[RMDB]
Description:
This 207-nucleotide RNA was probed chemically with DMS and 2A3. DMS adducts were read by reverse transcription with MarathonRT. High DMS reactivity at an A or C suggests that its Watson-Crick edge is free. For 2A3 the reverse transcriptase was SuperScript II with manganese. Source: RMDB library RNAMAK, as collected in RNAgym. Reactivities are given for positions 27 through 156. The RNA was probed in 150 mM KOAc, 10 mM MgCl2 and 150 mM bicine (pH 8.5) at 24 C.
RNA sequence: GGGAACGACUCGAGUAGAGUCGAAAAGGGGUCUUAAGAGGUGUACUUUCGACGAUCUAUACUGAAGCCUCCACGGUAUAGGGAGAAAGACACUACCCACCUUAAGACGGAGGCACCCAAACCAGUUAUACACAGCUUCGGCUGUGUAUAACUGGAACAACUUAGAGUUGUUCGCAACUCUAAGUUGAAAAGAAACAACAACAACAAC
Reactivity to DMS in 0.01 (KOAc 150mM, MgCl2 10mM, bicine 150mM(pH8.5), 24C), signal-to-noise 1, nucleotides 027 to 156: g000g030g060g030u000c020u010u000a040a070g000a150g020g000u000g000u000a180c000u020u000u000c010g000a140c190g050a070u010c000u000a060u000a030c010u000g000a050a100g000c020c000u000c020c090a300c040g020g030u000a020u000a060g010g000g010a020g000a030a070a040g000a090c010a050c050u000a050c010c010c040a300c020c000u000u000a030a020g000a040c020g020g010a100g010g020c000a090c010c030c010a090a090a300c000c000a000g040u000u000a010u000a010c010a010c010a000g010c000u000u000c300g050g010c020u010g110u030g000u000a000u000a000a000c000u000g010g000a040a030
Reactivity to 2A3 in 0.01 (KOAc 150mM, MgCl2 10mM, bicine 150mM(pH8.5), 24C), signal-to-noise 4, nucleotides 027 to 156: g020g010g030g010u000c010u000u010a010a010g010a010g000g000u030g000u170a300c010u010u010u020c090g170a270c010g000a090u000c010u010a000u000a000c000u030g040a120a020g010c000c000u030c000c000a000c000g000g000u000a000u000a000g000g000g000a020g000a000a010a010g000a000c000a000c000u000a000c010c010c010a050c010c000u000u000a010a010g010a000c010g020g020a020g000g000c000a030c000c010c010a050a040a050c000c000a000g000u000u000a000u000a000c000a000c000a000g010c010u100u200c300g160g000c000u000g010u000g000u000a000u000a000a000c000u000g000g000a000a000